[RMDB]
RNA sequence: GGGAACGACUCGAGUAGAGUCGAAAAGUUCAAGAACAAUUUGCAGCGACUGUUUCGCGAGGCACGCGAACAGAGCUUGGCGCUGGCCAGGAUCACCACGGCCAUCAACGUUGGCAGCCAGGAGCCGAUCCGAACUGAAAUUCGUUUCAGUUCGGAUAAAAGAAACAACAACAACAAC
Reactivity to 2A3 in 0.01 (KOAc 150mM, MgCl2 10mM, bicine 150mM(pH8.5), 24C), signal-to-noise 4, nucleotides 027 to 126: g040u070u070c050a090a050g090a130a050c060a090a130u110u150u300g040c060a050g000c020g200a240c120u020g040u050u220u090c040g000c010g000a090g170g010c240a060c220g000c010g010a000a000c000a010g000a000g000c000u040u080g030g000c030g000c050u030g000g000c010c040a120g090g000a090u100c030a050c100c010a020c050g040g030c050c000a030u060c050a000a110c050g080u090u060g020g010c010a020g000c020c010a010g020g030a050g000c020c010g000
Reactivity to DMS in 0.01 (KOAc 150mM, MgCl2 10mM, bicine 150mM(pH8.5), 24C), signal-to-noise 4, nucleotides 027 to 126: g010u010u000c080a120a140g010a110a080c130a070a100u010u010u000g040c150a040g000c030g010a170c030u000g010u000u000u000c010g020c000g000a150g010g020c160a130c030g010c000g020a010a010c040a010g010a300g000c020u000u000g030g020c040g010c070u010g000g000c010c050a120g000g000a060u000c120a100c050c030a060c080g000g010c030c020a030u010c120a100a070c120g010u000u000g010g010c010a190g030c040c030a050g000g000a120g030c010c020g000
Chemical mapping of a 177-nucleotide RNA with 2A3 and DMS. The DMS profile rests on 3,222 reads. The reactions ran in a buffer of 150 mM KOAc, 10 mM MgCl2 and 150 mM bicine (pH 8.5), at 24 C.